[RMDB]
RNA sequence: GGGAACGACUCGAGUAGAGUCGAAAACUCAUUGUGCGGGGGUGUCUGUGCAAUGCCAUCUCUGCUUCCCACCCAGAUCCUCCCGUGCACAUCGUGGACCCCCGAGAACAUGUGUUCGUGCAUGCCAUCCUGGGGAUGUUUUCGAACAUCCCCAGGAAAAAGAAACAACAACAACAAC
Reactivity to DMS in 0.01 (KOAc 150mM, MgCl2 10mM, bicine 150mM(pH8.5), 24C), signal-to-noise 1, nucleotides 027 to 126: c020u000c040a120u020u000g030u000g000c020g000g020g030g000g020u000g010u010c030u000g010u010g000c160a080a070u010g000c030c020a070u000c020u000c030u000g000c100u000u000c000c010c010a220c140c140c020a070g000a030u010c270c000u000c000c010c000g010u000g000c000a060c190a040u000c110g030u010g000g000a110c030c030c000c010c000g010a070g000a130a100c030a040u000g000u010g000u000u020c200g000u000g000c070a030u000g020c060c060a140

Structure probing data (DMS) for a 177-nucleotide construct. The data come from the RNA Mapping Database (RMDB), library OK2TRN. The reactions ran in a buffer of 150 mM KOAc, 10 mM MgCl2 and 150 mM bicine (pH 8.5), at 24 C.